[RMDB]
Chemical mapping of a 177-nucleotide RNA with DMS. The reactions ran in a buffer of 150 mM KOAc, 10 mM MgCl2 and 150 mM bicine (pH 8.5), at 24 C. Source: RMDB library TTRDEL, as collected in RNAgym.
RNA sequence: GGGAACGACUCGAGUAGAGUCGAAAAGAUAUGGAUCAAAGGGAGGAAGGUAUUCGGAAACGAAUAUGCUUCCGAAGAACUUUGAGUCCUAAGUCAAAACUAAAGGGAACUUCGGUUCCCUUUAGAACUAGUUACGGAAGUUCGCUUCCGUAACUAGAAAAGAAACAACAACAACAAC
Reactivity to DMS in 0.01 (KOAc 150mM, MgCl2 10mM, bicine 150mM(pH8.5), 24C), signal-to-noise 2, nucleotides 027 to 126: g030a010u000a030u010g010g010a260u000c010a000a010a010g020g000g020a020g000g020a010a000g000g000u000a010u000u000c010g020g000a030a000a030c010g010a020a020u000a000u000g010c000u000u000c000c010g000a080a100g000a180a220c000u000u000u000g010a030g000u010c000c000u010a010a110g000u010c010a120a090a080a210c000u000a000a010a000g010g000g010a010a010c000u000u020c230g030g000u000u010c000c000c000u000u000u000a000g010a080a190
For DMS, 2,748 sequencing reads were counted.